[RMDB]
RNA sequence: GGGAACGACUCGAGUAGAGUCGAAAAUCAGAAUAGUUCGCUAUUCUGAAAACGGGCAAAACGCAGACUGCCCGAUAGACGGCCAAACCGUCCAAGCGAAAAAAAGUCUGGGCUUCGGCCCAGACAACCCUACUAAAUGAUUCGUCAUUUAGUAGGGAAAAGAAACAACAACAACAAC
Reactivity to 2A3 in 0.01 (KOAc 150mM, MgCl2 10mM, bicine 150mM(pH8.5), 24C), signal-to-noise 1, nucleotides 027 to 126: u030c000a000g020a030a010u020a000g030u020u000c030g010c090u000a000u010u000c000u010g000a020a010a000a000c010g000g000g000c020a030a080a090a070c090g030c030a020g030a120c090u020g000c000c000c000g000a010u010a020g000a000c020g030g000c100c090a070a060a060c000c020g000u000c000c050a100a030g050c030g020a120a030a010a000a030a020a010g010u000c020u000g010g000g000c020u070u070c300g100g000c010c150c010a010g000a010c000a000a010
Reactivity to DMS in 0.01 (KOAc 150mM, MgCl2 10mM, bicine 150mM(pH8.5), 24C), signal-to-noise 3, nucleotides 027 to 126: u000c000a010g000a030a010u000a010g020u010u020c140g020c000u000a030u000u000c010u010g010a010a030a080a180c010g000g010g000c000a030a070a110a090c140g030c170a070g020a130c150u000g000c000c000c000g010a080u020a040g000a020c010g000g010c080c170a060a080a300c020c000g000u000c000c200a090a120g000c030g020a000a000a070a180a110a110a170g000u000c010u020g020g000g010c010u010u010c260g030g020c010c000c000a000g010a000c000a020a040
This 177-nucleotide RNA was probed chemically with 2A3 and DMS. 2A3 is a SHAPE reagent: it acylates the 2'-hydroxyl of flexible nucleotides of all four kinds. 2A3 adducts were read by reverse transcription with SuperScript II with manganese. The reactions ran in a buffer of 150 mM KOAc, 10 mM MgCl2 and 150 mM bicine (pH 8.5), at 24 C. DMS adducts were read by reverse transcription with MarathonRT. The DMS profile rests on 1,915 reads.